Structure probing data (DMS and 2A3) for a 207-nucleotide construct. The RNA was probed in 150 mM KOAc, 10 mM MgCl2 and 150 mM bicine (pH 8.5) at 24 C. For DMS the reverse transcriptase was MarathonRT. The DMS profile rests on 8,945 reads. For 2A3, 4,205 sequencing reads were counted.
RNA sequence: GGGAACGACUCGAGUAGAGUCGAAAAGACGUGGAGGUUUCGCGCCCUCCUUUGCGCGUAAGUACGUCGAAAUUCGGUGCUUUGGAUCGCACCGUUAGAUCCAUUUGAUAUCCGCUUAGUGCCGCGGUUGGGCAUUUACACUUACCCGAAAGGGGAAGCCUGCAUUAUUAUUCGUAAUAAUGCAGGCAAAAGAAACAACAACAACAAC
Reactivity to DMS in 0.01 (KOAc 150mM, MgCl2 10mM, bicine 150mM(pH8.5), 24C), signal-to-noise 3, nucleotides 027 to 156: g020a060c030g000u000g020g010a070g060g030u000u000u010c090g010c060g000c190c040c080u000c030c030u000u000u000g030c020g020c040g030u000a060a090g010u000a030c070g020u000c030g020a100a050a180u000u010c020g050g020u000g030c020u000u000u020g030g020a080u000c190g010c020a140c030c060g010u000u000a080g000a060u000c010c010a120u020u020u010g020a160u000a110u000c010c020g000c040u000u000a070g020u000g020c000c040g020c020g020g010u020u000g000g020g030c030a070u000u000u010a070c070a070c060u000u000a200c010c010c020g000a060a130a170g000g020g000g000a090a200
Reactivity to 2A3 in 0.01 (KOAc 150mM, MgCl2 10mM, bicine 150mM(pH8.5), 24C), signal-to-noise 5, nucleotides 027 to 156: g040a000c020g000u030g020g090a110g070g070u050u100u100c020g000c000g010c010c030c020u150c010c050u050u050u100g010c010g000c000g020u030a060a060g050u040a030c030g000u000c030g030a020a010a070u110u090c010g010g000u020g000c020u120u120u190g080g030a080u120c040g000c010a020c020c000g000u000u010a020g000a030u020c020c020a040u010u010u180g110a090u090a070u100c020c020g000c060u050u090a020g010u030g070c030c010g030c070g090g000u090u030g070g000g010c000a010u050u060u150a050c070a010c030u060u090a030c000c010c000g050a050a020a040g000g000g000g010a010a020